[RMDB]
RNA sequence: GGGAACGACUCGAGUAGAGUCGAAAACGGCCACGGGCAACGACGCGGCGACGGCCUGGGCAAAGCUCGUGUUUGGCGCCUCAUGGGUGCUUGACUACGCCGUGCCGACGUUCGCCGUUGUGGGCAACAGUUCCACUAGGUUCGCCUAGUGGAACUGAAAAGAAACAACAACAACAAC
Reactivity to DMS in 0.01 (KOAc 150mM, MgCl2 10mM, bicine 150mM(pH8.5), 24C), signal-to-noise 2, nucleotides 027 to 126: c080g010g020c000c010a050c010g000g010g000c030a080a050c090g010a110c110g010c030g020g000c000g020a060c020g010g020c020c150u020g010g000g010c010a110a060a300g000c010u000c000g020u010g010u000u000u010g000g010c000g030c010c050u000c190a170u020g000g010g030u000g020c080u000u000g000a020c020u000a110c260g000c000c020g010u000g020c020c000g000a090c020g000u000u000c080g020c000c030g010u010u010g020u010g030g010g010c050a140a170
Reactivity to 2A3 in 0.01 (KOAc 150mM, MgCl2 10mM, bicine 150mM(pH8.5), 24C), signal-to-noise 3, nucleotides 027 to 126: c020g090g000c010c010a020c040g000g000g000c020a040a020c020g070a040c080g000c030g130g030c080g100a010c000g000g000c000c050u140g000g000g000c190a300a180a030g010c000u020c030g030u010g020u050u010u060g010g000c010g010c000c000u090c080a180u300g100g000g020u000g050c010u020u010g000a030c030u110a060c120g020c010c010g000u000g000c010c010g060a130c000g000u050u070c090g000c010c000g030u100u150g030u030g040g040g010c020a080a040
The data come from the RNA Mapping Database (RMDB), library OK2TRN. Structure probing data (DMS and 2A3) for a 177-nucleotide construct. For DMS, 2,553 sequencing reads were counted. The RNA was probed in 150 mM KOAc, 10 mM MgCl2 and 150 mM bicine (pH 8.5) at 24 C.